[RMDB]
RNA sequence: GGGAACGACUCGAGUAGAGUCGAAAAGAUAUGGAGCGAACUACAGCCACUCAGCAACAGCUCGGAAACGAGACAUGCUGAAAUACGCUGCGCUCCUAAGUCAAACUAUAUCCUUCGGGAUAUAGAAGAUGUUGAGAGAGUUCGCUCUCUCAACAUCAAAAGAAACAACAACAACAAC
Reactivity to 2A3 in 0.01 (KOAc 150mM, MgCl2 10mM, bicine 150mM(pH8.5), 24C), signal-to-noise 2, nucleotides 027 to 126: g030a020u060a030u160g010g000a000g030c010g000a080a060c090u170a060c300a000g000c010c020a050c050u030c000a010g000c020a000a120c010a140g040c020u000c000g020g030a090a080a040c010g010a010g080a060c020a090u060g000c010u000g020a070a080a020u210a030c070g040c010u000g000c010g000c000u000c000c000u010a070a000g000u000c030a080a050a030c010u010a000u000a010u020c010c000u020u060c300g150g000g000a000u000a010u000a010g010a040a040
Reactivity to DMS in 0.01 (KOAc 150mM, MgCl2 10mM, bicine 150mM(pH8.5), 24C), signal-to-noise 3, nucleotides 027 to 126: g000a030u020a300u010g000g000a010g010c000g000a070a060c110u020a300c010a010g000c020c120a210c170u000c020a000g020c020a040a060c300a130g000c020u000c000g000g030a040a090a230c010g000a000g000a000c080a130u000g020c000u040g000a000a070a080u010a170c240g030c000u000g000c020g000c000u000c000c000u000a010a060g000u000c010a160a130a260c000u000a000u000a010u000c000c000u000u000c190g000g000g000a050u000a000u000a000g010a050a110

An RNA of 177 nucleotides, treated with 2A3 and DMS and read out base by base. 2A3 adducts were read by reverse transcription with SuperScript II with manganese. The DMS profile rests on 1,471 reads.